[RMDB]
RNA sequence: GGGAACGACUCGAGUAGAGUCGAAAAGAAGAGAGGAAGAUUUAGGGGAAGAAGAUAACAAUAUUCACGCGGUCUUCCGAGUUACGUGUGUAGACACUAUGAUUGUUAUCAAAACUAAAUAUGAGAAACUACCAGUAGCCUUCGGGCUACUGGUAGUAAAAGAAACAACAACAACAAC
Reactivity to 2A3 in 0.01 (KOAc 150mM, MgCl2 10mM, bicine 150mM(pH8.5), 24C), signal-to-noise 2, nucleotides 027 to 126: g210a050a000g030a000g000a000g000g010a070a070g050a090u010u010u010a030g000g030g000g000a000a060g030a080a020g000a070u020a010a000c000a020a010u140a080u040u080c000a000c030g000c000g000g040u010c040u180u000c020c020g000a000g020u100u090a120c000g000u000g000u000g000u040a000g290a170c040a000c070u090a120u290g080a030u060u010g000u000u000a020u140c110a000a110a030a030c010u100a030a000a020u070a130u090g070a080g140a060a170
Reactivity to DMS in 0.01 (KOAc 150mM, MgCl2 10mM, bicine 150mM(pH8.5), 24C), signal-to-noise 2, nucleotides 027 to 126: g000a160a110g000a080g000a060g000g000a020a020g000a050u020u020u020a030g010g000g000g010a150a060g030a080a090g000a000u000a000a000c020a000a000u000a070u000u010c080a030c050g000c060g020g030u020c070u000u000c100c040g010a060g010u010u010a130c210g000u000g050u000g000u030a070g000a090c070a010c180u020a100u000g000a050u000u010g000u000u000a010u000c010a060a100a100a070c060u000a000a030a020u100a080u020g050a090g000a100a050

Chemical mapping of a 177-nucleotide RNA with 2A3 and DMS. DMS (dimethyl sulfate) methylates the pairing face of unpaired adenines and cytosines. The RNA was probed in 150 mM KOAc, 10 mM MgCl2 and 150 mM bicine (pH 8.5) at 24 C. 2A3 adducts were read by reverse transcription with SuperScript II with manganese. For DMS, 1,835 sequencing reads were counted.